Structure probing data (2A3) for a 177-nucleotide construct. The 2A3 profile rests on 433 reads. Source: RMDB library OK1LIB, as collected in RNAgym. 2A3 adducts were read by reverse transcription with SuperScript II with manganese. The RNA was probed in 150 mM KOAc, 10 mM MgCl2 and 150 mM bicine (pH 8.5) at 24 C.

RNA sequence: GGGAACGACUCGAGUAGAGUCGAAAAUUACUAUUGAUUCCUUGGAUUGCUUAUGUGCAAUGUCUGGCAAUUUCCAUAUGAGUUCAUAGUCUUGGUCUUGGGCCAAGUUGAUUGCAGACUUUAGGAACGUAGCCGGUGAGUUCGCUCACCGGCUACGAAAAGAAACAACAACAACAAC
Reactivity to 2A3 in 0.01 (KOAc 150mM, MgCl2 10mM, bicine 150mM(pH8.5), 24C), signal-to-noise 1, nucleotides 027 to 126: u100u030a060c110u090a100u110u060g050a030u060u000c020c000u060u020g160g000a000u080u060g000c000u220u300a190u300g170u030g000c120a190a160u040g010u050c000u000g060g060c000a020a000u230u000u070c020c020a000u120a040u300g260a240g170u120u170c080a020u140a030g000u000c060u000u000g030g000u000c000u090u070g020g110g000c000c000a000a000g000u000u050g060a060u060u000g000c010a000g020a000c000u000u000u190a000g090g000a030a030